[RMDB]
Structure probing data (DMS) for a 177-nucleotide construct. DMS adducts were read by reverse transcription with MarathonRT. Reactivities are given for positions 27 through 126. For DMS, 984 sequencing reads were counted. Conditions: 150 mM KOAc, 10 mM MgCl2 and 150 mM bicine (pH 8.5), 24 C. The data come from the RNA Mapping Database (RMDB), library TTRDEL.

RNA sequence: GGGAACGACUCGAGUAGAGUCGAAAAGAUAUGGACUACUCGCGAUAAGAACCACAUCGGAAACGAUGUGUGUUCUUUUGACGCGAUCGUCCUAAGUCAAAGAUAAUCCAGUUCGCUGGAUUAUCAAGAUCCAUUGCCAGUUCGCUGGCAAUGGAUCAAAAGAAACAACAACAACAAC
Reactivity to DMS in 0.01 (KOAc 150mM, MgCl2 10mM, bicine 150mM(pH8.5), 24C), signal-to-noise 2, nucleotides 027 to 126: g000a010u000a300u000g000g000a020c000u010a150c300u000c000g020c000g000a140u010a000a030g010a000a010c000c000a010c000a000u000c000g010g000a060a050a140c000g010a000u000g030u000g020u000g020u000u000c020u020u000u000u010g010a180c020g060c000g020a010u010c300g020u000c000c020u010a040a090g000u000c040a110a100a070g000a020u000a000a000u010c010c000a000g000u020u040c200g020c000u010g010g020a000u000u000a020u000c000a080a060